Source information:
Structure probing data (2A3 and DMS) for a 177-nucleotide construct. 2A3 adducts were read by reverse transcription with SuperScript II with manganese.

[RMDB]
RNA sequence: GGGAACGACUCGAGUAGAGUCGAAAAUCUGGCGCGUGAGGAUAAGGUUGCUCUAUUAAGUGGCGGGACGCUCUAUUACUUGCGACAUUUUCUUUAUGGUCUACCCACCACGCCUCCUGCUAGUGAGCAACGCUUAAUGCUUCGGCAUUAAGCGUUGAAAAGAAACAACAACAACAAC
Reactivity to 2A3 in 0.01 (KOAc 150mM, MgCl2 10mM, bicine 150mM(pH8.5), 24C), signal-to-noise 3, nucleotides 027 to 126: u030c000u020g000g000c050g000c020g070u150g030a040g030g000a090u040a090a060g100g010u040u130g050c020u040c000u050a140u110u120a170a040g040u020g090g010c050g040g030g020a040c050g040c010u030c010u030a170u190u060a080c060u060u040g010c040g050a050c080a120u110u040u070u020c030u040u190u080a100u120g040g040u020c030u080a090c020c010c000a030c030c010a020c030g060c010c000u080c010c010u010g010c000u010a020g030u040g090a020g060
Reactivity to DMS in 0.01 (KOAc 150mM, MgCl2 10mM, bicine 150mM(pH8.5), 24C), signal-to-noise 3, nucleotides 027 to 126: u000c080u010g020g020c030g010c130g030u010g020a050g010g010a070u010a040a060g010g010u000u000g010c030u000c030u000a080u000u000a110a110g030u010g020g010c030g000g000g020a150c160g000c020u000c100u000a090u010u010a040c110u000u000g000c030g020a070c090a040u000u000u010u010c060u000u000u000a040u010g010g000u010c080u000a190c040c010c030a070c050c050a050c090g010c040c030u000c030c030u010g020c020u000a080g000u010g000a090g010